This 177-nucleotide RNA was probed chemically with 2A3 and DMS. Conditions: 150 mM KOAc, 10 mM MgCl2 and 150 mM bicine (pH 8.5), 24 C. 2A3 adducts were read by reverse transcription with SuperScript II with manganese. Values cover nucleotides 27 to 126.
[RMDB]
RNA sequence: GGGAACGACUCGAGUAGAGUCGAAAAUUAUGUUGAAUCCACAUCUGUGUCUCUGCAACUCACACUCCUUGGAGCCGUGCAGAGCAAAAUGUCUAAUGCUGCUUCCACAAAUAUUUGAAGGCCACAAAAUCUCUGUAAUGUUCGCAUUACAGAGAUUAAAAGAAACAACAACAACAAC
Reactivity to 2A3 in 0.01 (KOAc 150mM, MgCl2 10mM, bicine 150mM(pH8.5), 24C), signal-to-noise 9, nucleotides 027 to 126: u110u060a090u130g060u030u070g040a050a040u030c020c010a040c000a050u030c050u080g110u020g140u110c000u010c000u030g000c010a030a090c020u030c030a130c020a030c100u110c070c040u070u190g060g000a010g040c070c080g080u030g000c010a010g010a000g020c000a000a010a010a060u140g020u010c040u060a050a030u060g020c020u010g000c000u040u000c010c010a030c030a070a110a040u140a100u050u080u110g070a070a040g050g000c020c000a040c020a020a160
Reactivity to DMS in 0.01 (KOAc 150mM, MgCl2 10mM, bicine 150mM(pH8.5), 24C), signal-to-noise 5, nucleotides 027 to 126: u020u030a050u020g000u000u010g000a090a140u010c020c050a060c060a050u010c060u030g020u010g000u030c010u010c020u000g000c030a070a080c050u010c090a090c220a120c100u000c050c060u000u020g010g000a050g020c160c120g020u010g000c040a020g000a060g010c050a010a060a090a060u020g000u010c060u020a080a120u010g000c020u000g010c020u000u000c020c030a070c090a040a070a080u020a080u010u010u000g000a110a090g010g000c030c030a050c150a080a070